Conditions: 150 mM KOAc, 10 mM MgCl2 and 150 mM bicine (pH 8.5), 24 C. The record gives the reactivity of an RNA of 177 nucleotides to 2A3 and DMS. The DMS profile rests on 11,399 reads. Reactivities are given for positions 27 through 126.

[RMDB]
RNA sequence: GGGAACGACUCGAGUAGAGUCGAAAAGAUAUGGAUCGAAGCAUCGAUCUGGCGAUCGGAAACGAUCGCCCAGGGAGCUUCUAUCCUAAGUCAAACACUCCGUCACAGUUCGCUGUGACGGAGUGAACAGUUAUCUUAAGUUCGCUUAAGAUAACUGAAAAGAAACAACAACAACAAC
Reactivity to 2A3 in 0.01 (KOAc 150mM, MgCl2 10mM, bicine 150mM(pH8.5), 24C), signal-to-noise 4, nucleotides 027 to 126: g010a020u060a010u140g000g000a000u010c050g000a010a010g010c050a230u300c060g200a190u070c020u000g000g000c000g000a010u010c000g000g010a030a050a010c000g000a000u000c000g000c050c010c000a010g060g050g010a010g000c000u000u000c000u010a000u000c000c000u000a100a010g040u020c010a010a120a040c010a010c010u000c010c000g000u000c010a000c010a010g050u140u200c270g080c190u010g000u010g000a000c020g000g000a000g000u000g000a000a000
Reactivity to DMS in 0.01 (KOAc 150mM, MgCl2 10mM, bicine 150mM(pH8.5), 24C), signal-to-noise 6, nucleotides 027 to 126: g010a030u000a240u010g000g010a010u000c090g000a020a010g010c010a240u000c140g000a080u000c010u000g000g000c010g000a000u000c000g000g000a080a050a140c000g010a000u000c000g000c200c040c020a010g000g010g010a050g010c010u000u000c000u010a030u000c000c000u000a040a120g000u000c020a150a110a240c010a010c000u000c000c000g010u000c000a010c000a010g010u000u010c230g030c000u000g010u000g010a000c000g000g000a000g000u000g000a030a100